[RMDB]
RNA sequence: GGGAACGACUCGAGUAGAGUCGAAAAGGAUCCUAAGUACUCUGGGUAACUGCCUCGAGAUCAGUUACCAGUGAGGAGUACUCAAUUUGUCAAAGAUCUCGAGGUUGACGGGUUGAGAAUAGGAUCGCUACUCCUAAGUAUUCGUACUUAGGAGUAGAAAAGAAACAACAACAACAAC
Reactivity to 2A3 in 0.01 (KOAc 150mM, MgCl2 10mM, bicine 150mM(pH8.5), 24C), signal-to-noise 8, nucleotides 027 to 126: g020g000a000u000c000c000u020a060a020g060u020a040c010u010c040u150g100g000g030u050a040a040c010u010g010c010c030u070c100g120a110g020a120u080c000a010g020u020u030a000c000c020a030g050u060g070a060g020g020a040g030u030a010c000u000c000a000a040u010u010u040g010u000c010a020a020a050g050a110u020c030u040c070g040a050g080g000u020u010g010a010c010g010g030g000u020u000g010a030g040a070a080u040a020g000g000a000u000c000g000
Reactivity to DMS in 0.01 (KOAc 150mM, MgCl2 10mM, bicine 150mM(pH8.5), 24C), signal-to-noise 9, nucleotides 027 to 126: g000g000a010u000c000c000u000a040a130g010u000a020c000u000c000u000g010g000g010u000a020a050c020u000g000c120c030u000c220g010a120g010a090u000c010a030g000u000u000a030c040c020a110g010u010g020a110g000g000a090g010u000a070c000u000c010a010a010u000u000u000g000u000c030a030a040a070g010a060u000c030u000c050g000a090g010g010u000u000g010a030c030g000g000g010u000u000g000a050g010a100a130u000a010g010g000a010u000c000g010